Structure probing data (2A3 and DMS) for a 177-nucleotide construct. Source: RMDB library OK2TRN, as collected in RNAgym. DMS adducts were read by reverse transcription with MarathonRT. The reactions ran in a buffer of 150 mM KOAc, 10 mM MgCl2 and 150 mM bicine (pH 8.5), at 24 C. For 2A3 the reverse transcriptase was SuperScript II with manganese.
[RMDB]
RNA sequence: GGGAACGACUCGAGUAGAGUCGAAAAAGUGUGAGGGCUUCGGCGACGUGGUCGUCGUGGAUCGGUCCGGCCAGCAACUCACGCAGCCGGCUUGUGUCGGGUGUCUGCUCACGCAGCGCGUAGAGCAUGCGUUAACGCCAUUCGUGGCGUUAACGCAAAAAGAAACAACAACAACAAC
Reactivity to 2A3 in 0.01 (KOAc 150mM, MgCl2 10mM, bicine 150mM(pH8.5), 24C), signal-to-noise 1, nucleotides 027 to 126: a010g100u040g000u030g000a040g020g090g010c010u070u110c120g000g020c000g030a070c090g210u260g070g000u050c030g000u030c040g050u070g120g010a140u140c020g000g020u000c040c000g000g060c040c010a010g000c000a030a180c040u050c050a020c060g060c000a000g060c020c000g000g020c070u190u190g140u100g000u190c020g010g010g010u050g040u000c080u050g030c000u010c000a020c000g000c020a140g260c080g000c000g070u030a030g010a000g020c030a030
Reactivity to DMS in 0.01 (KOAc 150mM, MgCl2 10mM, bicine 150mM(pH8.5), 24C), signal-to-noise 1, nucleotides 027 to 126: a100g030u000g020u010g000a040g010g000g020c030u010u010c120g050g000c020g000a050c010g020u010g050g010u000c000g040u000c210g020u000g000g000a080u000c040g000g000u000c040c110g030g040c000c010a060g010c050a070a090c020u000c010a000c050g000c020a130g000c030c000g000g000c070u000u000g030u000g010u020c010g000g000g020u000g000u010c090u000g010c000u000c050a080c040g010c010a130g020c170g000c000g000u000a090g020a010g010c040a090